[RMDB]
RNA sequence: GGGAACGACUCGAGUAGAGUCGAAAAGGUUCGAGAUUCGUCUCGAACCAAAUAAAAUCAGCGGUAAAUAAUUACCUCCCGUUACCGCUGAACGGGAGCAUAUGGUCACUUGUUUCGACAAGUGAAAACAUAAACGGAACUUCGGUUCCGUUUAUGUAAAAGAAACAACAACAACAAC
Reactivity to DMS in 0.01 (KOAc 150mM, MgCl2 10mM, bicine 150mM(pH8.5), 24C), signal-to-noise 3, nucleotides 027 to 126: g030g010u010u000c000g020a010g000a030u000u010c200g020u000c000u000c000g010a010a000c000c000a020a060a030u020a060a070a110a090u000c010a010g000c010g020g010u020a030a060a020u000a030a050u010u000a120c170c020u000c000c000c000g030u010u000a090c020c020g000c000u000g010a010a010c030g000g000g010a040g010c300a060u010a070u010g020g000u000c020a030c000u000u000g010u000u000u010c230g010a050c000a010a000g010u000g000a020a050a080
Reactivity to 2A3 in 0.01 (KOAc 150mM, MgCl2 10mM, bicine 150mM(pH8.5), 24C), signal-to-noise 3, nucleotides 027 to 126: g020g000u010u010c000g000a000g000a020u020u090c160g040u000c080u000c000g000a000a000c000c000a000a020a000u030a000a030a000a010u010c000a000g030c000g140g200u190a070a080a100u120a080a140u210u160a120c030c000u000c010c000c000g000u000u040a180c020c000g000c000u000g000a000a000c000g010g020g000a010g000c020a080u160a070u290g120g040u020c000a000c010u000u010g010u050u130u120c160g080a010c010a000a000g000u010g000a030a020a010
The record gives the reactivity of an RNA of 177 nucleotides to DMS and 2A3.